[RMDB]
RNA sequence: GGGAACGACUCGAGUAGAGUCGAAAAGUGAACCUGCUAUUCUGGUGCACAAGCCAGAGUCUUCCAUUGGGAAGCGAAGACCCCGUAGAGUUUUACUGCAGUCUGUCGUUGAAGCUUGGUUAUAGGUGUAAUCUAAUUAGUUCGCUAAUUAGAUUACAAAAGAAACAACAACAACAAC
Reactivity to 2A3 in 0.01 (KOAc 150mM, MgCl2 10mM, bicine 150mM(pH8.5), 24C), signal-to-noise 5, nucleotides 027 to 126: g080u050g020a030a040c000c010u010g010c010u060a090u120u010c010u010g000g020u100g030c120a070c030a260a010g030c000c000a010g000a020g010u030c030u030u000c000c020a130u100u220g210g000g030a040a010g010c000g020a020a000g020a020c010c000c030c040g010u030a020g020a030g040u000u060u140u200a040c010u020g000c000a000g020u000c020u050g130u060c030g030u020u060g060a030a010g000c040u090u090g030g020u110u030a120u080a140g110g030u030
Reactivity to DMS in 0.01 (KOAc 150mM, MgCl2 10mM, bicine 150mM(pH8.5), 24C), signal-to-noise 6, nucleotides 027 to 126: g010u000g010a060a080c040c010u000g010c040u000a100u000u000c010u000g010g010u000g010c130a120c250a100a180g010c000c010a020g000a060g000u010c040u000u000c010c010a230u000u010g010g010g010a070a050g010c060g000a090a070g000a090c010c050c070c090g000u000a060g010a130g000u000u000u010u000a070c020u000g010c060a060g010u000c030u000g010u000c070g010u010u000g010a060a100g010c090u000u000g010g010u000u010a090u000a100g020g010u000

Structure probing data (2A3 and DMS) for a 177-nucleotide construct.
The RNA was probed in 150 mM KOAc, 10 mM MgCl2 and 150 mM bicine (pH 8.5) at 24 C.
The 2A3 profile rests on 5,819 reads.
For 2A3 the reverse transcriptase was SuperScript II with manganese.